[RMDB]
Structure probing data (DMS) for a 177-nucleotide construct. The DMS profile rests on 1,494 reads. For DMS the reverse transcriptase was MarathonRT. Conditions: 150 mM KOAc, 10 mM MgCl2 and 150 mM bicine (pH 8.5), 24 C. Reactivities are given for positions 27 through 126. The data come from the RNA Mapping Database (RMDB), library TTRDES.

RNA sequence: GGGAACGACUCGAGUAGAGUCGAAAAGAUAUGGAAGACCUAUGACAUGCGUACGGAUCGGAAACGAUCCGACGCAACAGCAUAGGGUCUUCCUAAGUCAAAACGCGUGGGCUUCGGCCCACGCGAACAAUGAGCAACGGUUCGCCGUUGCUCAUUGAAAAGAAACAACAACAACAAC
Reactivity to DMS in 0.01 (KOAc 150mM, MgCl2 10mM, bicine 150mM(pH8.5), 24C), signal-to-noise 2, nucleotides 027 to 126: g000a050u000a300u000g030g020a000a000g010a120c010c000u000a010u010g000a070c090a200u010g000c030g050u000a300c010g010g030a010u000c000g000g010a120a070a230c000g000a010u000c000c000g000a010c010g030c000a000a020c300a190g030c000a020u000a010g000g010g040u000c000u020u000c000c000u010a000a100g000u000c050a050a080a070a110c040g050c000g060u010g010g010g000c010u000u000c300g000g000c000c000c000a000c000g000c010g000a020a100